[RMDB]
RNA sequence: GGGAACGACUCGAGUAGAGUCGAAAACGAUCAGUACGUUCGCGUACUGAUCGAAGCUACUGGAGACAGUAGCAAGUCUAAGAUCUUGUUAGGCGGAAACAAGGAAAAAUGGAGGAAGGCCGGAGCUCCAUACUUAGACAACCGCCAACUGGCCAAAACUCCCUAAAUUAUUCGUAAUUUAGGGAGUAAAAGAAACAACAACAACAAC
Reactivity to DMS in 0.01 (KOAc 150mM, MgCl2 10mM, bicine 150mM(pH8.5), 24C), signal-to-noise 2, nucleotides 027 to 156: c060g030a000u000c010a040g010u000a000c000g110u000u010c280g070c030g020u000a000c010u000g000a010u010c000g010a000a130g030c000u000a010c010u010g010g000a300g000a300c030a020g010u000a010g020c000a050a050g030u010c020u000a060a040g020a230u010c010u000u010g000u000u000a100g040g020c140g060g000a300a070a030c010a030a030g000g020a010a010a100a140a130u010g000g000a050g000g000a070a020g000g000c090c000g000g000a300g050c020u000c000c000a100u000a110c020u010u000a130g000a080c080a080a210c030c060g000c060c040a030a060c020u000g000g060c020c030a050a040a190
Reactivity to 2A3 in 0.01 (KOAc 150mM, MgCl2 10mM, bicine 150mM(pH8.5), 24C), signal-to-noise 4, nucleotides 027 to 156: c000g010a000u000c000a000g010u000a000c010g030u050u080c240g000c000g120u010a000c000u000g000a000u000c000g000a000a000g000c000u000a000c000u000g000g030a050g020a030c000a000g000u000a000g010c010a010a020g000u010c000u020a030a020g020a110u020c010u010u030g020u030u050a130g030g140c050g040g070a060a030a010c000a010a020g020g080a060a100a070a040a020u040g020g000a010g040g030a120a180g020g000c020c010g030g010a030g050c000u000c000c000a010u020a090c010u020u000a010g000a030c030a070a070c090c020g020c030c010a020a060c020u030g010g000c000c000a010a020a030
The record gives the reactivity of an RNA of 207 nucleotides to DMS and 2A3. Reactivities are given for positions 27 through 156. The reactions ran in a buffer of 150 mM KOAc, 10 mM MgCl2 and 150 mM bicine (pH 8.5), at 24 C.